[RMDB]
RNA sequence: GGGAACGACUCGAGUAGAGUCGAAAACUUGUCCGCGUAGCUCACCUGGAUGUAGCGUACCUUGUUCUCCUCCUCGUCUGGUGACGAGAAGGUGAACACGUUGUGCAACGCGGCGAUGGCUGCAUCCGCGGUCAGGCGAGUUCGCUCGCCUGACCGCAAAAGAAACAACAACAACAAC
Reactivity to 2A3 in 0.01 (KOAc 150mM, MgCl2 10mM, bicine 150mM(pH8.5), 24C), signal-to-noise 2, nucleotides 027 to 126: c040u080u050g040u050c010c000g000c020g020u090a070g060c070u060c070a090c000c050u060g070g010a090u040g000u080a000g030c080g050u070a080c090c010u020u000g000u000u000c010u000c030c000u000c000c000u000c000g010u010c060u180g240g060u300g010a020c000g000a000g040a000a020g000g000u000g000a010a000c000a000c000g150u170u200g050u000g070c080a120a010c040g000c030g010g000c050g050a100u180g050g000c010u010g030c020a000u000c020c010
This 177-nucleotide RNA was probed chemically with 2A3. For 2A3 the reverse transcriptase was SuperScript II with manganese. The RNA was probed in 150 mM KOAc, 10 mM MgCl2 and 150 mM bicine (pH 8.5) at 24 C.